[RMDB]
RNA sequence: GGGAACGACUCGAGUAGAGUCGAAAAGGACUUUUAGCAUUAGUGGCAUGAGCAUCAACGAUAAGCUGGCAGCAGCACUAAACGACCAAAUCACCGCCGAGUUGGAAGCCUCCAUGGUUUACCUCCAAACCUCUUACAUUUUCGAAUGUAAGAGGUUAAAAGAAACAACAACAACAAC
Reactivity to DMS in 0.01 (KOAc 150mM, MgCl2 10mM, bicine 150mM(pH8.5), 24C), signal-to-noise 7, nucleotides 027 to 126: g010g020a080c050u000u000u010u000a070g020c040a080u000u000a070g030u000g020g010c050a060u000g010a080g020c050a040u010c050a070a080c100g010a100u000a070a100g020c050u000g000g000c100a080g010c040a050g010c040a060c090u000a030a080a090c090g000a120c040c040a030a060a080u000c060a060c060c040g010c060c040g010a080g010u010u010g010g000a090a120g010c060c010u010c090c080a060u000g010g000u000u000u000a080c070c030u000c040c060a070
Reactivity to 2A3 in 0.01 (KOAc 150mM, MgCl2 10mM, bicine 150mM(pH8.5), 24C), signal-to-noise 3, nucleotides 027 to 126: g040g000a040c010u060u080u060u110a030g000c030a070u040u090a030g040u050g090g000c040a060u090g030a010g020c010a030u060c030a030a060c040g060a060u040a160a050g010c010u030g040g000c030a050g000c010a000g030c000a030c040u080a060a080a040c050g020a020c000c010a000a050a060u070c030a030c020c020g000c000c020g030a030g060u010u020g060g010a030a020g010c010c000u010c050c020a030u050g000g040u070u060u100a070c010c000u030c020c000a040
About this RNA
This 177-nucleotide RNA was probed chemically with DMS and 2A3. Source: RMDB library OK2TST, as collected in RNAgym. DMS adducts were read by reverse transcription with MarathonRT. 2A3 adducts were read by reverse transcription with SuperScript II with manganese. The reactions ran in a buffer of 150 mM KOAc, 10 mM MgCl2 and 150 mM bicine (pH 8.5), at 24 C.